Overview:
This 170-nucleotide RNA was probed chemically with 2A3 and DMS. The DMS profile rests on 27,353 reads. Values are in units of 0.01, from 0 to 300, in steps of 10.

RNA sequence: GGGAACGACUCGAGUAGAGUCGAAAAGCGCUCCCCUCGGCAGACCGCCCAUUGGGUUCACACCCCCAGGCCGCGGGCCGGCUGUUCUUCUUUCUCUUUCGUCGUCAUCCUUGGCUAGCCUCUGGAGUUCUCGGUCUGUUCGCAGACCGAAAAAGAAACAACAACAACAAC
Reactivity to 2A3 in 0.01 (KOAc 150mM, MgCl2 10mM, bicine 150mM(pH8.5), 24C), signal-to-noise 5, nucleotides 027 to 129: g040c080g020c020u050c000c000c000c000u010c000g020g000c000a010g040a160c000c000g020c000c010c000a050u060u130g050g010g000u150u130c090a080c020a060c070c010c000c000c010a020g030g020c020c020g030c050g030g020g030c010c020g000g000c000u020g060u040u030c000u040u030c000u020u090u030c020u000c000u010u050u040c050g050u020c000g020u020c020a060u050c050c020u040u060g010g000c020u030a030g040c000c000u040c050u000g020g010a080g040u100u050c030
Reactivity to DMS in 0.01 (KOAc 150mM, MgCl2 10mM, bicine 150mM(pH8.5), 24C), signal-to-noise 5, nucleotides 027 to 129: g030c070g030c090u030c010c000c000c000u000c050g000g000c000a080g000a200c080c090g070c070c040c030a130u040u070g000g000g000u050u050c140a100c190a300c080c000c010c010c050a100g030g000c000c080g030c150g010g010g030c080c010g010g040c010u000g000u050u020c070u050u000c050u000u000u000c020u000c020u020u000u040c110g000u000c090g030u020c040a090u040c070c030u000u000g000g060c040u020a000g000c050c000u030c010u040g030g000a130g010u000u000c050